[RMDB]
RNA sequence: GGGAACGACUCGAGUAGAGUCGAAAAACUAAGUAAAAGCCAGGAGUUCUGGGUGCGGACCCGCAGCGUGUGUGGCACCUACACGCUAAGUACAGGUCCUUCCUCUGGAGGUCGCUUGUCCUGGAGGAUCUGAGGACCUGUUCGCAGGUCCUCAGAUAAAAGAAACAACAACAACAAC
Reactivity to DMS in 0.01 (KOAc 150mM, MgCl2 10mM, bicine 150mM(pH8.5), 24C), signal-to-noise 2, nucleotides 027 to 126: a050c050u010a040a190g000u020a050a070a110a110g010c000c010a090g000g000a050g010u020u030c030u020g010g000g010u000g080c300g010g000a030c000c020c020g020c080a080g020c050g020u000g010u000g020u030g000g000c090a000c010c000u040a030c000a030c050g020c010u010a050a110g050u020a050c050a060g000g010u000c000c030u000u000c050c000u010c080u030g020g020a030g010g060u020c130g000c100u020u030g000u010c000c000u020g010g000a090g000g000
Reactivity to 2A3 in 0.01 (KOAc 150mM, MgCl2 10mM, bicine 150mM(pH8.5), 24C), signal-to-noise 2, nucleotides 027 to 126: a000c080u140a110a020g180u090a060a060a060a000g050c000c000a020g030g070a040g080u100u060c010u070g030g010g030u050g020c040g010g000a040c010c000c010g000c050a020g020c030g020u000g000u000g020u110g090g000c040a010c020c000u000a000c020a000c000g000c000u080a150a000g100u090a050c030a030g000g020u000c000c000u000u020c020c030u010c050u030g000g060a030g040g040u060c040g000c170u060u090g000u000c000c010u010g030g020a020g010g030
Structure probing data (DMS and 2A3) for a 177-nucleotide construct. For 2A3 the reverse transcriptase was SuperScript II with manganese. It was measured as part of the RMDB library RFM100. Values cover nucleotides 27 to 126. Reactivities are rounded to 0.1 and cut off at 0 and 3. 2A3 is a SHAPE reagent: it acylates the 2'-hydroxyl of flexible nucleotides of all four kinds.